[RMDB]
RNA sequence: GGGAACGACUCGAGUAGAGUCGAAAAUCCGAUCGUCAUCUCUGCGACUGAACUCAAGUCCCUGGAGUAUAGGGAGCGUUCUGUGUUAGAGUUUCUAACACGCAGUAAGCUCGAUUAGGAAUAUCGGGCAGUCGAGUGUAUUCGUACACUCGACUGCAAAAGAAACAACAACAACAAC
Reactivity to DMS in 0.01 (KOAc 150mM, MgCl2 10mM, bicine 150mM(pH8.5), 24C), signal-to-noise 1, nucleotides 027 to 126: u000c030c020g000a060u000c050g000u010c080a080u020c130u010c000u010g000c050g020a240c090u010g000a070a090c040u010c070a080a210g000u010c000c000c000u000g000g010a150g020u000a080u000a000g000g000g010a050g010c160g030u000u000c010u000g020u010g000u000u000a000g040a230g000u020u000u030c000u000a010a040c010a080c000g000c050a020g000u000a120a070g000c070u000c010g000a020u000u000a060g010g000a060a110u000a050u010c030g000g010
Source: RMDB library OK2TRN, as collected in RNAgym. Chemical mapping of a 177-nucleotide RNA with DMS. For DMS, 987 sequencing reads were counted. The RNA was probed in 150 mM KOAc, 10 mM MgCl2 and 150 mM bicine (pH 8.5) at 24 C.